[RMDB]
RNA sequence: GGGAACGACUCGAGUAGAGUCGAAAAGGGACCGUCCCCUCGGUAAUGGCGAAUGGGACCCAGAACUCUCUCUAGAUUCCGAUAGAGAAUCGAGAGAAAACUGGCUCUCCCUUAGCCAUCCGAGUGGCUUUUUAUAACCGUUCGCGGUUAUAAAAAGAAAAGAAACAACAACAACAAC
Reactivity to DMS in 0.01 (KOAc 150mM, MgCl2 10mM, bicine 150mM(pH8.5), 24C), signal-to-noise 3, nucleotides 027 to 126: g010g010g020a210c080c060g010u020c030c000c010c010u000c000g010g020u020a030a020u000g000g010c010g010a210a060u000g000g000g020a030c300c000c000a010g010a100a300c200u000c010u000c000u000c010u000a130g020a010u000u010c000c010g000a160u010a120g000a160g000a010a000u000c000g000a020g020a010g010a020a020a050a180c030u000g000g000c030u000c080u000c000c000c000u000u000a300g010c000c000a000u000c010c000g000a020g020u000g020g000
Reactivity to 2A3 in 0.01 (KOAc 150mM, MgCl2 10mM, bicine 150mM(pH8.5), 24C), signal-to-noise 1, nucleotides 027 to 126: g040g000g030a030c030c050g050u080c000c010c010c010u000c000g000g040u100a120a040u030g000g000c010g030a040a030u060g010g000g010a060c110c000c000a000g040a060a050c010u050c000u020c000u000c010u110a090g000a030u000u000c020c030g150a260u200a220g210a000g000a070a010u000c010g000a000g000a000g000a000a020a000a020c010u010g000g000c010u000c000u010c000c000c000u000u020a000g020c000c000a000u000c000c010g000a000g000u030g050g000